This 207-nucleotide RNA was probed chemically with 2A3 and DMS. The data come from the RNA Mapping Database (RMDB), library OK3TST.
[RMDB]
RNA sequence: GGGAACGACUCGAGUAGAGUCGAAAAUCGUGAGUCCACCUUCGAGUCGUGGUCCACGACCAUGAAGCUGACCGUGCGUGACCUGCUGACCACCAACAUCUACCGAGUGCUACACAGCCGCUCCGUGCUCUCCUAUGAGCGUUAUGUGGACUGGAUCUGGUAUUGCUUAUUUCGAUAAGCAAUACCAAAAAGAAACAACAACAACAAC
Reactivity to 2A3 in 0.01 (KOAc 150mM, MgCl2 10mM, bicine 150mM(pH8.5), 24C), signal-to-noise 5, nucleotides 027 to 156: u060c010g010u030g030a040g030u020c010c010a010c010c000u080u130c100g040a040g060u070c040g030u040g000g030u010c030c010a000c030g010a000c010c010a100u140g050a060a020g030c050u040g060a070c010c060g070u070g040c040g030u040g050a060c000c020u020g020c010u040g030a030c020c020a020c020c010a070a030c020a080u060c020u060a050c030c030g050a030g040u040g060c020u060a040c070a000c010a110g020c030c030g000c020u010c020c040g050u020g020c000u020c010u040c040c050u140a140u250g020a000g000c010g040u110u050a070u150g050u040g020g020a020c000u010g020g030a040u050c020
Reactivity to DMS in 0.01 (KOAc 150mM, MgCl2 10mM, bicine 150mM(pH8.5), 24C), signal-to-noise 4, nucleotides 027 to 156: u010c020g030u000g020a100g030u000c010c020a050c010c070u010u010c090g000a100g010u000c060g050u010g010g030u000c010c030a050c080g020a070c040c020a080u010g020a070a080g020c050u000g010a080c040c050g050u000g030c060g000u010g010a100c020c020u010g000c040u010g010a100c050c020a140c070c040a070a060c050a080u000c020u000a110c040c030g010a120g020u000g020c000u000a100c050a100c040a070g000c050c020g020c010u000c050c030g020u000g030c030u000c030u000c110c110u000a090u010g000a040g030c020g010u000u010a080u000g010u000g020g000a120c060u010g010g010a170u000c050
For DMS, 12,030 sequencing reads were counted.
Reactivities are given for positions 27 through 156.
The RNA was probed in 150 mM KOAc, 10 mM MgCl2 and 150 mM bicine (pH 8.5) at 24 C.